This 177-nucleotide RNA was probed chemically with DMS.
Source: RMDB library TTRDES, as collected in RNAgym.
The reactions ran in a buffer of 150 mM KOAc, 10 mM MgCl2 and 150 mM bicine (pH 8.5), at 24 C.
For DMS the reverse transcriptase was MarathonRT.
Reactivities are given for positions 27 through 126.

RNA sequence: GGGAACGACUCGAGUAGAGUCGAAAAGAUAUGGAUUUCUGGAGCGAUAAGGAGACUUCGGAAACGAAGUUCUCCUUUUGACGCUCACAGAAAUCCUAAGUCAAAGAACGGACUUCGGUCCGUUCAAGACCAGAGUACAGUUCGCUGUACUCUGGUCAAAAGAAACAACAACAACAAC
Reactivity to DMS in 0.01 (KOAc 150mM, MgCl2 10mM, bicine 150mM(pH8.5), 24C), signal-to-noise 2, nucleotides 027 to 126: g020a070u010a300u000g000g000a020u010u000u000c000u000g000g010a020g050c000g030a160u010a010a000g000g020a010g000a050c000u000u000c000g010g000a070a060a160c000g010a010a030g010u030u000c000u000c000c000u000u000u000u010g040a250c080g020c000u000c010a070c010a010g000a020a000a000u010c000c000u000a010a060g000u010c010a100a180a150g010a020a010c000g010g010a030c000u000u000c220g030g030u000c000c000g010u000u000c010a040a150